[RMDB]
RNA sequence: GGGAACGACUCGAGUAGAGUCGAAAAGAUAUGGACCUUUAAAGCUCGAUAAGAAGCAGUCGGAAACGACUGGCUUCUUUUGACGAGCUGUGCGGGUCCUAAGUCAAAACCUGUAGUUCGCUACAGGGCCUUGUGCCAUGUUCGCAUGGCACAAGGCAAAAGAAACAACAACAACAAC
Reactivity to DMS in 0.01 (KOAc 150mM, MgCl2 10mM, bicine 150mM(pH8.5), 24C), signal-to-noise 1, nucleotides 027 to 126: g000a020u000a300u020g010g000a020c000c000u000u000u020a200a060a020g000c000u000c000g040a300u000a020a010g020a020a000g010c010a020g010u000c000g000g000a150a060a160c000g040a010c000u020g020g020c000u000u000c000u010u000u020u000g000a260c130g020a000g000c000u000g000u000g000c290g000g000g010u000c000c020u050a080a060g000u000c040a090a060a120a180c020c010u000g010u000a010g020u000u000c300g050c000u000a000c000a020g020g000
The data come from the RNA Mapping Database (RMDB), library TTRDES. An RNA of 177 nucleotides, treated with DMS and read out base by base. The RNA was probed in 150 mM KOAc, 10 mM MgCl2 and 150 mM bicine (pH 8.5) at 24 C. DMS adducts were read by reverse transcription with MarathonRT.